[RMDB]
RNA sequence: GGGAACGACUCGAGUAGAGUCGAAAAUCGGCGGAGCCUCGACGCGCUUCAUUCCGUUGCUGCACAGCUCGGCGCACAGCAUGCCGCUGUCGCUGGAACGCUUCCGCCAAUCCUCGACGGAGCAGCACCCUGGCGUGAGGUUCGCCUCACGCCAGGGAAAAGAAACAACAACAACAAC
Reactivity to 2A3 in 0.01 (KOAc 150mM, MgCl2 10mM, bicine 150mM(pH8.5), 24C), signal-to-noise 1, nucleotides 027 to 126: u170c050g000g040c000g070g000a040g000c020c100u060c110g080a050c070g060c020g000c040u110u050c040a090u120u000c010c090g060u040u060g030c000u010g010c020a030c010a080g010c010u000c010g010g000c000g000c010a030c000a050g010c050a060u210g220c050c070g000c050u010g010u000c000g000c000u040g000g110a040a040c150g020c040u160u040c000c000g000c000c000a010a060u050c000c000u040c040g080a050c000g010g000a060g060c020a010g000c000a010
The data come from the RNA Mapping Database (RMDB), library OK2TST.
Chemical mapping of a 177-nucleotide RNA with 2A3.
Reactivities are given for positions 27 through 126.
2A3 adducts were read by reverse transcription with SuperScript II with manganese.
The RNA was probed in 150 mM KOAc, 10 mM MgCl2 and 150 mM bicine (pH 8.5) at 24 C.
For 2A3, 1,050 sequencing reads were counted.